[RMDB]
RNA sequence: GGGAACGACUCGAGUAGAGUCGAAAAGCAUAUGAUUUAAUGCAGGAGAAAGUGGGCUAACUUUUCGGCAUUAACUUUCUUUCAGUAUACAUUGAACCAAUUUCAGGCCUACAGUUUUAGGUGUAAUAUAAUAACCACAAAUAUCAUUUGGUUUUAACGGGGAUUAAUCAUUCGUGAUUAAUCCCCGAAAAGAAACAACAACAACAAC
Reactivity to 2A3 in 0.01 (KOAc 150mM, MgCl2 10mM, bicine 150mM(pH8.5), 24C), signal-to-noise 1, nucleotides 027 to 156: g000c000a030u090a020u170g080a080u080u150u210a110a000u060g000c000a020g020g030a010g050a060a060a010g010u030g030g050g010c040u000a080a060c090u110u030u120u160c100g000g050c020a020u030u120a110a000c000u000u070u090c000u000u080u060c010a000g110u080a020u020a110c080a000u000u150g010a030a010c020c000a060a090u000u110u150c100a040g060g030c000c020u010a090c070a050g060u040u030u030u260a010g000g010u020g000u040a000a140u070a040u030a120a100u100a010a120c020c000a090c070a040a070a000u080a040u070c110a100u080u020u110g020g000u020u000u000u080a020a020